Description
This 177-nucleotide RNA was probed chemically with DMS.

RNA sequence: GGGAACGACUCGAGUAGAGUCGAAAACGCCUGUAAUCCCGGCACUUCAGGAGGCAGAGGCAGGUGGAUCGCUUGAGCCCAGGAGUUCGAGACCACCCUGGGCAACAUGAUAAAACCCUGUCUCUACUGAGCAUGUAUGUUUCGACAUACAUGCUCAAAAAGAAACAACAACAACAAC
Reactivity to DMS in 0.01 (KOAc 150mM, MgCl2 10mM, bicine 150mM(pH8.5), 24C), signal-to-noise 2, nucleotides 027 to 126: c170g040c040c010u010g000u000a140a140u000c000c000c040g040g000c180a070c220u000u000c120a040g020g020a060g020g010c040a010g000a020g020g000c010a020g020g000u000g000g000a010u000c160g000c050u000u020g000a300g010c010c010c000a030g020g000a060g020u010u010c140g020a190g010a040c100c160a080c050c000c000u000g020g000g010c000a000a020c030a020u000g010a040u000a050a050a120a120c140c000c000u000g000u000c010u000c010u000a010c090
Background: The data come from the RNA Mapping Database (RMDB), library OK2TRN. The reactions ran in a buffer of 150 mM KOAc, 10 mM MgCl2 and 150 mM bicine (pH 8.5), at 24 C.